The record gives the reactivity of an RNA of 177 nucleotides to DMS and 2A3.
Conditions: 150 mM KOAc, 10 mM MgCl2 and 150 mM bicine (pH 8.5), 24 C.
It was measured as part of the RMDB library OK2TST.
Reactivities are given for positions 27 through 126.
RNA sequence: GGGAACGACUCGAGUAGAGUCGAAAAUUUCCAUCCGGUGAAUGUGGGGAGGAUGGUCCUCGGCCAGGAGACGUUCCUGCCGUGUACGCCGCACGGUAUCCUCAUGAUGCUGCGCCACGCGGGGGUGUACAUCCCACUUGUUCGCAAGUGGGAUGUAAAAAGAAACAACAACAACAAC
Reactivity to DMS in 0.01 (KOAc 150mM, MgCl2 10mM, bicine 150mM(pH8.5), 24C), signal-to-noise 3, nucleotides 027 to 126: u000u000u010c010c000a070u000c020c010g010g030u000g020a100a080u010g030u000g010g000g000g010a170g010g010a050u000g010g040u010c150c070u000c050g020g000c040c040a140g010g000a040g010a140c040g000u000u000c000c000u000g010c040c020g020u000g000u000a070c110g010c050c130g000c000a030c050g000g010u000a040u010c040c080u000c100a070u010g010a090u000g020c020u000g000c030g030c160c020a030c040g010c050g000g000g010g000g020u010g010
Reactivity to 2A3 in 0.01 (KOAc 150mM, MgCl2 10mM, bicine 150mM(pH8.5), 24C), signal-to-noise 2, nucleotides 027 to 126: u060u050u000c020c000a020u000c020c020g160g010u110g100a220a090u200g050u090g070g030g010g000a050g020g010a020u030g050g000u050c020c050u020c000g000g020c010c000a070g070g060a010g010a040c030g020u020u010c010c000u020g020c030c030g010u000g000u010a080c060g020c040c020g000c000a000c000g000g030u050a080u040c010c020u080c030a070u170g060a140u050g030c020u020g020c020g000c050c000a040c010g020c050g030g000g000g000g010u060g020